An RNA of 177 nucleotides, treated with 2A3 and DMS and read out base by base. The data come from the RNA Mapping Database (RMDB), library TTRINS. Conditions: 150 mM KOAc, 10 mM MgCl2 and 150 mM bicine (pH 8.5), 24 C.
[RMDB]
RNA sequence: GGGAACGACUCGAGUAGAGUCGAAAAGAUAUGGAUGUCGAAAUUGCGCGGUAAUACUAUGUGAACCGGCUACAUCGGAAACGAUGUAGUCAAAACAUAGUGCCAGCGUGUUUCGACAUCCUAAGUCGACAACGUUAUACUUCGGUAUAACGUUGUCAAAAGAAACAACAACAACAAC
Reactivity to 2A3 in 0.01 (KOAc 150mM, MgCl2 10mM, bicine 150mM(pH8.5), 24C), signal-to-noise 3, nucleotides 027 to 126: g060a030u180a060u300g000g000a000u030g000u010c000g020a010a010a000u300u300g040c030g010c040g000g010u070a160a070u110a300c000u010a010u020g030u000g170a090a080c090c050g030g020c000u020a010c010a010u010c010g020g030a060a030a040c000g010a010u000g000u000a000g020u010c000a020a050a010a010c000a000u010a000g000u010g000c000c020a040g000c020g000u030g030u000u020u000c010g010a000c000a010u000c000c000u000a010a000g040u020c090
Reactivity to DMS in 0.01 (KOAc 150mM, MgCl2 10mM, bicine 150mM(pH8.5), 24C), signal-to-noise 3, nucleotides 027 to 126: g030a050u020a300u010g020g000a020u020g000u000c000g030a010a000a020u000u010g050c020g060c020g000g000u030a110a150u020a300c000u020a000u000g030u030g010a130a260c300c250g010g010c000u000a010c000a000u000c010g000g030a150a100a230c010g000a000u000g010u000a000g010u000c000a020a080a180a010c000a000u000a010g030u000g000c020c010a140g000c010g010u000g050u010u030u010c000g000a000c010a000u000c000c000u010a000a070g000u000c180